This 177-nucleotide RNA was probed chemically with 2A3 and DMS. High DMS reactivity at an A or C suggests that its Watson-Crick edge is free. 2A3 adducts were read by reverse transcription with SuperScript II with manganese. Source: RMDB library TTRDES, as collected in RNAgym. Conditions: 150 mM KOAc, 10 mM MgCl2 and 150 mM bicine (pH 8.5), 24 C. Values are in units of 0.01, from 0 to 300, in steps of 10.
[RMDB]
RNA sequence: GGGAACGACUCGAGUAGAGUCGAAAAGAUAUGGACCGUGUAAAGCAACAGCCGUCACUCGGAAACGAGUGGGCGGACAUGCUUACACGGUCCUAAGUCAAAAGCAAGCAGCUUCGGCUGCUUGCAAGAAGCAAUUUUAGUUCGCUAAAAUUGCUUCAAAAGAAACAACAACAACAAC
Reactivity to 2A3 in 0.01 (KOAc 150mM, MgCl2 10mM, bicine 150mM(pH8.5), 24C), signal-to-noise 2, nucleotides 027 to 126: g010a000u020a010u030g000g000a000c000c090g020u000g020u000a300a300a040g000c270a100a140c050a280g020c000c010g000u020c000a000c010u010c000g020g000a000a000a000c010g000a000g000u020g000g030g070c060g000g000a000c010a070u300g000c000u000u000a000c000a000c000g000g000u000c000c000u000a000a000g000u010c000a020a020a000a040g000c000a020a000g000c010a000g000c000u170u300c300g140g000c000u000g010c000u010u010g010c010a000a010
Reactivity to DMS in 0.01 (KOAc 150mM, MgCl2 10mM, bicine 150mM(pH8.5), 24C), signal-to-noise 3, nucleotides 027 to 126: g000a020u000a040u010g000g000a010c000c000g020u000g010u000a030a040a060g040c010a130a090c160a180g000c000c010g030u000c000a010c000u000c000g010g000a020a010a010c000g010a000g020u010g030g010g010c000g000g000a010c020a300u000g030c010u000u010a000c000a000c010g000g000u000c000c000u000a000a040g000u010c000a130a110a160a180g000c000a010a010g020c000a030g000c010u000u030c230g030g000c010u000g000c000u000u010g010c000a040a040